[RMDB]
An RNA of 177 nucleotides, treated with 2A3 and DMS and read out base by base.
For 2A3 the reverse transcriptase was SuperScript II with manganese.
DMS adducts were read by reverse transcription with MarathonRT.
The DMS profile rests on 8,928 reads.
The RNA was probed in 150 mM KOAc, 10 mM MgCl2 and 150 mM bicine (pH 8.5) at 24 C.
RNA sequence: GGGAACGACUCGAGUAGAGUCGAAAAUAUAGUUUACAGGACUACGCGUUUGAACACGUUGUUUAUGGUAGUUUUAACCAGAAGAUUAUUGGAGGUUUGCAUUUGCUUAUUGGCUUAGCCCGUAGGCCAGUGGAUCUUUAUUCGUAAAGAUCCACUGAAAAGAAACAACAACAACAAC
Reactivity to 2A3 in 0.01 (KOAc 150mM, MgCl2 10mM, bicine 150mM(pH8.5), 24C), signal-to-noise 3, nucleotides 027 to 126: u140a010u020a040g050u000u060u100a120c080a070g080g000a020c010u010a000c030g070c000g060u020u140u150g110a060a020c020a030c100g020u040u050g010u070u210u070a090u110g040g010u010a010g020u080u080u100u100a040a030c010c020a000g050a120a010g040a090u130u150a040u190u180g060g040a100g040g040u030u090u100g000c040a100u000u050u170g020c010u070u030a060u070u100g020g000c000u020u030a040g020c000c000c000g010u020a020g020g030c040
Reactivity to DMS in 0.01 (KOAc 150mM, MgCl2 10mM, bicine 150mM(pH8.5), 24C), signal-to-noise 6, nucleotides 027 to 126: u020a090u000a060g000u010u000u000a110c150a130g010g000a040c020u000a010c060g020c050g010u000u010u010g010a110a090c080a050c080g010u010u010g030u000u000u010a080u020g000g020u000a060g010u010u010u000u000a060a140c040c050a060g010a100a100g000a070u000u000a070u020u000g010g010a100g010g000u000u000u000g010c100a070u010u000u000g000c030u000u000a060u000u000g010g010c000u000u010a120g000c030c010c020g000u010a030g000g000c050